[RMDB]
An RNA of 177 nucleotides, treated with 2A3 and DMS and read out base by base. For DMS, 1,179 sequencing reads were counted.

RNA sequence: GGGAACGACUCGAGUAGAGUCGAAAAUUGGCAGAUAACCCUGACGAUCUAUAUAACGCACUACAAAGUUACUUACUAGUCAAGAUCAACAAAAGUAGCAAUGACUGGGAGAUUAUCGAUGCCUACAGAUUACGAUAGGCUUCGGCCUAUCGUAAUCAAAAGAAACAACAACAACAAC
Reactivity to 2A3 in 0.01 (KOAc 150mM, MgCl2 10mM, bicine 150mM(pH8.5), 24C), signal-to-noise 2, nucleotides 027 to 126: u030u000g010g040c020a030g000a040u010a080a080c010c000c000u000g040a030c070g020a090u030c060u090a070u010a020u020a300a060c070g000c070a060c070u100a020c080a050a120a000g000u050u000a020c000u040u060a070c010u040a020g020u040c010a030a030g040a180u110c040a010a080c030a000a130a020a010g000u050a020g000c080a080a080u080g030a040c020u030g000g080g010a110g010a070u020u050a040u090c070g050a080u130g000c010c010u000a010c000a020
Reactivity to DMS in 0.01 (KOAc 150mM, MgCl2 10mM, bicine 150mM(pH8.5), 24C), signal-to-noise 2, nucleotides 027 to 126: u000u010g050g060c010a130g000a080u020a090a100c010c010c050u040g000a160c070g000a030u000c030u020a100u000a100u000a080a060c170g000c100a100c070u000a080c060a060a080a170g030u000u000a060c030u000u000a060c090u000a100g010u000c070a030a050g020a130u000c040a030a110c080a030a110a060a040g000u000a020g010c100a080a090u000g010a080c070u000g000g000g000a100g000a160u000u010a010u000c010g000a120u000g010c000c000u000a040c220a090
Record summary
Source: RMDB library OK2TST, as collected in RNAgym. For DMS the reverse transcriptase was MarathonRT. 2A3 adducts were read by reverse transcription with SuperScript II with manganese.